[RMDB]
RNA sequence: GGGAACGACUCGAGUAGAGUCGAAAAUGAAAAAUUAUUACAUAUGGUAUAAGAACUAAACUUCUAUUAUGGCUGGCAACGGACAACGUGUUAACUGGGGGGACGAACCUGUUCCUUCACAGAAGCGUGGUCGUUCUCGUUCCCGUUCACGCCGUAAAGACUUAACCGUAUUCGUACGGUUAAGUCUAAAAGAAACAACAACAACAAC
Reactivity to 2A3 in 0.01 (KOAc 150mM, MgCl2 10mM, bicine 150mM(pH8.5), 24C), signal-to-noise 1, nucleotides 027 to 156: u070g000a010a140a000a000a050u140u210a130u190u280a150c090a080u300a080u110g040g080u130a170u100a300a070g090a240a010c080u140a260a060a040c100u250u030c000u080a100u110u000a000u100g000g000c020u020g120g000c020a000a000c000g010g000a030c070a090a010c030g060u070g090u230u100a150a080c030u040g010g000g000g000g000g000a000c000g020a030a020c030c030u050g000u040u050c000c020u010u060c060a090c000a080g130a100a000g010c000g010u030g010g000u000c010g000u040u000c000u000c030g060u040u100c140c000c000g000u000u020c020a000c000g040c020c000g080u030a000a000